[RMDB]
RNA sequence: GGGAACGACUCGAGUAGAGUCGAAAACGCAUGCGAAAGCAUGCGGCUAUGCUAAUGCAUAGUGACCGCCUUUUUGCACACAUCGCGGGCUAUCGCCUUGUUAUUGGUGAUAGCGUUUCCUCAUAGACUUGUUAUUGUCUGUGCAGGUGGUGUGCCACCAGUAUAUGCGAUUCGUCGCAUAUACUGGAAAAGAAACAACAACAACAAC
Reactivity to DMS in 0.01 (KOAc 150mM, MgCl2 10mM, bicine 150mM(pH8.5), 24C), signal-to-noise 4, nucleotides 027 to 156: c010g030c010a010u000g010c010g010a180a110a240g010c000a010u000g010c000g020g010c010u000a010u000g010c000u000a120a180u010g020c000a020u000a010g010u000g010a210c010c010g010c040c020u000u000u000u000u010g030c030a060c030a040c070a050u000c050g000c040g030g020g010c020u000a010u000c010g020c010c010u000u010g020u000u000a150u010u000g020g020u000g010a040u000a010g010c030g000u000u000u000c020c000u010c050a070u010a060g010a040c030u000u000g020u000u000a110u010u000g010u000c020u010g040u000g010c090a020g030g030u000g020g020u000g020u000g010c020c090a150
Reactivity to 2A3 in 0.01 (KOAc 150mM, MgCl2 10mM, bicine 150mM(pH8.5), 24C), signal-to-noise 9, nucleotides 027 to 156: c000g000c000a000u000g010c000g060a070a010a010g000c000a000u000g000c000g000g010c000u000a000u000g000c030u190a300a100u300g000c000a000u000a000g010u020g080a050c000c000g040c010c010u090u190u030u120u140g000c010a000c000a000c010a050u170c100g000c010g030g020g000c010u000a000u000c000g010c000c010u110u150g150u300u240a250u120u160g000g010u000g000a000u000a000g000c000g010u010u040u000c000c000u010c000a000u010a010g010a000c020u070u120g120u300u280a190u200u200g000u020c000u000g000u000g020c100a010g000g020u050g010g010u000g000u000g000c000c000a020